[RMDB]
RNA sequence: GGGAACGACUCGAGUAGAGUCGAAAACAUAUGAGGGAGAAUAGAUUGGUGGGAUUCAUAAGAGCCAGAAUUGGCGUUUAGAGCCAGCUUGUAAGCCACAUGAUUGGCUAUGACUCAACAGAUACAAGUGGCAUCUUGCAACCAUUAGUAUCAGUAACUGCGAUUACCGUUUCGACGGUAAUCGCAGAAAAGAAACAACAACAACAAC
Reactivity to 2A3 in 0.01 (KOAc 150mM, MgCl2 10mM, bicine 150mM(pH8.5), 24C), signal-to-noise 1, nucleotides 027 to 156: c020a010u300a010u180g000a030g030g060g000a080g000a070a150u090a070g020a060u080u000g000g000u000g000g100g020a040u090u100c010a000u060a070a030g000a000g200c050c000a010g050a090a140u180u070g000g000c040g080u160u000u130a040g000a000g040c000c000a030g000c000u000u000g000u020a070a070g020c010c000a040c000a100u250g060a300u080u000g000g000c000u010a050u120g110a070c000u050c090a000a120c000a070g000a020u020a070c000a030a030g010u000g040g000c000a000u000c080u080u080g020c020a000a110c030c050a050u000u130a020g030u020a030u080c080a000g050u170a000a100